[RMDB]
RNA sequence: GGGAACGACUCGAGUAGAGUCGAAAAGUUCUCCCGCGUCCUCGCUGGUCGAUUCCCUGGUCGAGCUGAACGCGGAGAAGGUCGAGGCGGACUACGAAGCGGGCCGCGAUCCUCGCCCGUACUUCGAGCUUCAUGUCAAUUUCGAUUGACAUGAAGCAAAAGAAACAACAACAACAAC
Reactivity to 2A3 in 0.01 (KOAc 150mM, MgCl2 10mM, bicine 150mM(pH8.5), 24C), signal-to-noise 3, nucleotides 027 to 126: g020u020u000c020u030c000c000c030g000c000g020u000c000c020u010c040g020c030u060g000g050u030c030g090a300u100u060c040c010c010u040g020g030u130c070g070a020g000c060u070g120a110a010c020g000c020g030g010a030g030a040a020g040g030u060c040g010a030g050g020c060g030g030a060c050u080a060c140g070a070a010g050c030g010g010g050c050c020g040c040g030a090u070c000c030u030c030g000c010c000c010g010u060a110c010u010u040c020g030a050
Reactivity to DMS in 0.01 (KOAc 150mM, MgCl2 10mM, bicine 150mM(pH8.5), 24C), signal-to-noise 3, nucleotides 027 to 126: g000u010u010c010u010c040c040c030g020c030g020u010c010c030u000c140g000c100u000g000g010u000c050g020a180u000u000c080c010c010u020g010g010u000c020g010a040g010c110u010g000a080a040c030g010c030g000g000a050g000a050a070g000g010u000c030g010a070g010g000c060g000g010a100c060u000a100c080g000a050a070g020c030g000g010g010c050c060g010c030g000a070u010c050c010u000c070g020c010c010c000g010u010a090c060u000u000c020g020a260
The record gives the reactivity of an RNA of 177 nucleotides to 2A3 and DMS. For DMS the reverse transcriptase was MarathonRT.